[RMDB]
RNA sequence: GGGAACGACUCGAGUAGAGUCGAAAAUGAAACUUCACAAACAGGCCUAGAUUUCUACCCAGGGAACCGCUGUUAUCAGAGAAGGGAGUUUGGAAUCUUAAGCAACAAACACAUGUUGAUUCUCAGUAUUUGCCUCCUGAUGGCUUGCUCAGAGAGCAGCUAGAAGUAAAUUCGUUUACUUCUAGCUAAAAGAAACAACAACAACAAC
Reactivity to DMS in 0.01 (KOAc 150mM, MgCl2 10mM, bicine 150mM(pH8.5), 24C), signal-to-noise 3, nucleotides 027 to 156: u010g000a130a030a080c070u000u010c040a090c030a090a050a110c050a040g030g000c020c010u000a130g000a120u000u000u000c050u000a070c000c050c050a300g010g010g000a060a090c020c030g020c030u020g020u000u000a090u000c040a110g000a140g010a070a110g000g000g020a090g020u000u010u000g010g010a080a090u000c080u010u010a070a120g000c030a050a070c030a040a040a040c030a050c070a060u000g010u020u010g030a110u000u000c030u000c040a220g010u000a090u000u000u000g030c060c020u000c060c040u000g000a070u000g020g000c030u000u000g020c060u000c040a120g020a150g010a100g030c120
Reactivity to 2A3 in 0.01 (KOAc 150mM, MgCl2 10mM, bicine 150mM(pH8.5), 24C), signal-to-noise 5, nucleotides 027 to 156: u110g020a050a060a000c060u130u110c050a040c070a110a190a050c050a070g090g000c010c030u070a070g010a160u040u070u010c020u060a050c010c010c040a030g050g000g040a060a040c030c030g010c050u030g020u130u050a070u130c040a020g030a010g040a150a060g040g030g010a050g010u070u130u120g020g020a030a030u020c010u060u090a110a030g050c030a010a050c010a050a140a010c050a020c020a130u060g030u020u050g060a060u080u010c060u010c030a040g020u060a150u060u090u120g070c020c000u060c010c010u080g040a070u070g010g000c000u000u060g000c010u020c040a040g120a000g010a010g070c010